[RMDB]
RNA sequence: GGGAACGACUCGAGUAGAGUCGAAAACAACUGGAUCUAUCUGCCGAACAGCCAGGCAAAGACGAGCACGGACCUUUACGGAGACAUGUUUGGCCUGACCAAAGACCAGAUCCAGAUGAUCUCCGAUGCGGUACCGAACCGUGACUACCUCUGGAUCCAGCAUGAAAGGGUUCGCCCUUUCAUGCUGAAAAGAAACAACAACAACAAC
Reactivity to 2A3 in 0.01 (KOAc 150mM, MgCl2 10mM, bicine 150mM(pH8.5), 24C), signal-to-noise 3, nucleotides 027 to 156: c050a010a030c050u030g030g010a020u020c010u030a060u030c010u090g020c010c030g080a130a070c040a040g090c080c030a060g030g000c050a050a020a070g070a060c070g020a020g040c050a030c030g000g070a060c000c010u080u100u140a060c050g030g000a050g020a000c010a010u070g060u050u050u050g050g030c020c010u040g020a110c060c100a210a100a010g040a040c030c020a000g000a050u000c000c000a000g000a000u040g020a100u000c000u000c000c000g020a010u070g060c080g010g010u080a160c050c040g040a070a030c000c020g000u010g040a080c010u070a110c020c000u020c030u060g000g030a020u010c010
Reactivity to DMS in 0.01 (KOAc 150mM, MgCl2 10mM, bicine 150mM(pH8.5), 24C), signal-to-noise 2, nucleotides 027 to 156: c060a090a210c090u000g040g010a100u000c120u000a090u070c060u010g020c060c110g000a030a240c100a060g000c040c080a000g040g050c030a040a000a220g020a020c010g030a070g020c060a090c000g020g000a260c030c000u000u000u000a210c040g030g010a030g000a070c030a030u000g010u000u000u000g010g010c070c010u000g010a140c070c040a140a080a100g020a100c040c040a010g040a090u010c070c030a010g000a020u010g010a110u000c010u000c010c010g050a140u000g020c300g020g010u000a070c050c020g000a050a140c000c010g010u000g010a160c010u010a060c000c020u000c010u000g000g010a060u040c030